Notes
This 177-nucleotide RNA was probed chemically with DMS and 2A3.
[RMDB]
RNA sequence: GGGAACGACUCGAGUAGAGUCGAAAACGCCGAUGUCCGGGUGGUGCAGGAAUUGCUGGGGCACGCCUCGGUGACCACGACGCAGAUCUAUACCCUGGUCACCGUCCAUGCACUGCGCGAGGUGUGGCACAGAUAAGGAAUUCGUUCCUUAUCUGUGAAAAGAAACAACAACAACAAC
Reactivity to DMS in 0.01 (KOAc 150mM, MgCl2 10mM, bicine 150mM(pH8.5), 24C), signal-to-noise 9, nucleotides 027 to 126: c100g020c020c010g010a110u000g010u000c070c020g000g000g060u000g000g020u000g010c020a060g010g010a060a090u010u000g020c100u010g020g000g000g010c080a070c210g010c040c030u000c010g000g010u000g000a010c000c010a040c140g000a090c110g010c120a080g000a110u010c120u010a120u010a130c060c030c060u000g010g000u000c000a010c010c010g010u000c020c020a090u010g010c010a040c020u000g010c040g000c020g010a110g010g010u000g010u000g010g000
Reactivity to 2A3 in 0.01 (KOAc 150mM, MgCl2 10mM, bicine 150mM(pH8.5), 24C), signal-to-noise 9, nucleotides 027 to 126: c040g010c020c020g110a130u140g070u060c040c020g100g010g050u020g020g010u030g000c020a020g020g120a090a080u190u200g060c060u080g040g020g040g020c100a080c120g120c000c010u010c010g000g000u010g000a010c000c000a030c090g070a020c040g010c150a050g010a170u030c050u080a130u120a170c040c010c000u030g000g000u000c010a000c010c010g010u000c010c000a060u050g000c010a010c040u030g000c170g010c010g050a080g000g020u040g020u060g050g010
For DMS, 29,825 sequencing reads were counted. DMS adducts were read by reverse transcription with MarathonRT. The RNA was probed in 150 mM KOAc, 10 mM MgCl2 and 150 mM bicine (pH 8.5) at 24 C. Reactivities are given for positions 27 through 126. For 2A3 the reverse transcriptase was SuperScript II with manganese. The data come from the RNA Mapping Database (RMDB), library OK2TST.